Structure probing data (2A3 and DMS) for a 177-nucleotide construct. For DMS the reverse transcriptase was MarathonRT. For 2A3 the reverse transcriptase was SuperScript II with manganese. Reactivities are rounded to 0.1 and cut off at 0 and 3. Conditions: 150 mM KOAc, 10 mM MgCl2 and 150 mM bicine (pH 8.5), 24 C.
[RMDB]
RNA sequence: GGGAACGACUCGAGUAGAGUCGAAAAACUCAGGUGCCCGCUGCAGCAACAGGUGACACACUCGAGAGUUACAUGGCAGCGGAUCGACUGAGGCAGAGAUAUGCUGAUGCAGGCACCCAUGAUGAUGACGUGAGCAAGUCUUCGGACUUGCUCACGUAAAAGAAACAACAACAACAAC
Reactivity to 2A3 in 0.01 (KOAc 150mM, MgCl2 10mM, bicine 150mM(pH8.5), 24C), signal-to-noise 1, nucleotides 027 to 126: a020c020u000c000a000g120g040u000g010c000c000c000g000c000u020g060c000a080g070c020a030a120c000a040g060g080u010g010a020c010a000c010a040c100u060c030g290a180g000a000g250u030u000a000c020a060u060g010g000c000a000g020c000g000g030a020u130c050g160a120c020u030g000a040g040g000c040a050g040a000g020a070u050a040u300g000c010u040g010a040u060g050c040a010g080g000c020a040c000c020c000a090u130g040a010u060g020a040u140g050
Reactivity to DMS in 0.01 (KOAc 150mM, MgCl2 10mM, bicine 150mM(pH8.5), 24C), signal-to-noise 2, nucleotides 027 to 126: a110c050u000c060a040g000g000u000g000c180c000c020g040c000u000g000c000a140g020c200a070a170c080a050g020g000u010g020a080c060a140c200a080c090u010c150g000a120g020a210g010u000u000a050c020a050u000g020g020c000a000g000c010g010g000a020u100c070g010a070c040u010g000a160g000g000c030a020g000a230g000a080u000a060u000g020c020u020g040a100u000g000c050a110g000g000c020a060c050c000c100a090u000g010a110u000g000a160u020g000